[RMDB]
RNA sequence: GGGAACGACUCGAGUAGAGUCGAAAAGAUAUGGAAGGGAGGGAGCUGAUCACAUCGGAAACGAUGUGCAGCUUUGAUCUCCUUCCUAAGUCAAAUCGCUUUAAUGACUUCGGUCAUUAAAGCGAAAGAUGUGAUCUAUCUUCGGAUAGAUCACAUCAAAAGAAACAACAACAACAAC
Reactivity to 2A3 in 0.01 (KOAc 150mM, MgCl2 10mM, bicine 150mM(pH8.5), 24C), signal-to-noise 3, nucleotides 027 to 126: g000a010u050a020u090g000g040a020a040g110g050g050a050g020g030g010a020g010c010u020g010a130u300c010a000c000a010u000c000g010g040a070a050a030c020g000a000u000g000u010g020c000a000g000c000u080u040u030g070a080u000c060u050c030c000u010u000c000c000u000a080a000g020u010c020a000a030a240u050c010g000c000u030u010u000a000a000u000g010a010c000u040u050c300g100g000u000c000a010u000u010a000a000a000g000c000g000a010a010a000
Reactivity to DMS in 0.01 (KOAc 150mM, MgCl2 10mM, bicine 150mM(pH8.5), 24C), signal-to-noise 3, nucleotides 027 to 126: g010a040u000a300u010g010g010a020a010g000g000g000a050g010g000g000a000g000c000u000g000a150u010c010a000c000a000u000c000g010g000a150a080a220c010g010a010u000g000u000g000c000a010g000c000u000u000u000g000a110u020c020u010c000c000u000u000c000c000u010a020a130g010u000c010a070a120a130u000c010g010c000u000u000u000a010a000u000g010a010c000u000u010c170g030g010u000c000a010u010u000a000a000a010g000c000g010a000a040a030
Conditions: 150 mM KOAc, 10 mM MgCl2 and 150 mM bicine (pH 8.5), 24 C.
Structure probing data (2A3 and DMS) for a 177-nucleotide construct.
The 2A3 profile rests on 8,608 reads.
For DMS, 3,912 sequencing reads were counted.